[RMDB]
RNA sequence: GGGAACGACUCGAGUAGAGUCGAAAAACACGGAAACGAUGCCACAGUUGACUGAACCUGUCUUCUAACAGUAGUUAAUUGCCAGUAUUUCAAACAAGAUUUGAAAUACGAGUUUCCCAGAAUAAUUCUACAAAGGGAAAUUCGUUUCCCUUUGUAGAAAAGAAACAACAACAACAAC
Reactivity to DMS in 0.01 (KOAc 150mM, MgCl2 10mM, bicine 150mM(pH8.5), 24C), signal-to-noise 4, nucleotides 027 to 126: a040c080a140c140g000g000a040a020a020c030g010a100u010g030c080c170a190c080a050g020u000u000g020a020c020u000g010a140a080c230c010u020g010u020c140u020u020c190u020a090a040c000a030g000u030a020g000u000u000a020a050u010u000g010c110c130a120g000u000a000u000u010u010c000a000a010a030c030a090a170g010a300u020u010u000g000a000a000a010u000a000c000g000a120g000u000u000u000c000c000c110a150g010a090a080u010a060a120u000u010
Reactivity to 2A3 in 0.01 (KOAc 150mM, MgCl2 10mM, bicine 150mM(pH8.5), 24C), signal-to-noise 8, nucleotides 027 to 126: a000c070a010c020g010g020a040a050a010c030g050a040u140g050c020c020a040c010a020g020u020u030g050a030c010u050g040a050a100c040c020u020g020u010c050u170u030c050u160a090a020c000a030g060u070a010g010u030u030a020a040u050u030g040c040c010a020g000u000a000u000u000u000c010a000a010a020c060a180a120g130a300u000u000u000g000a000a000a000u010a010c010g000a000g000u000u010u000c000c000c000a010g020a020a070u230a070a080u040u010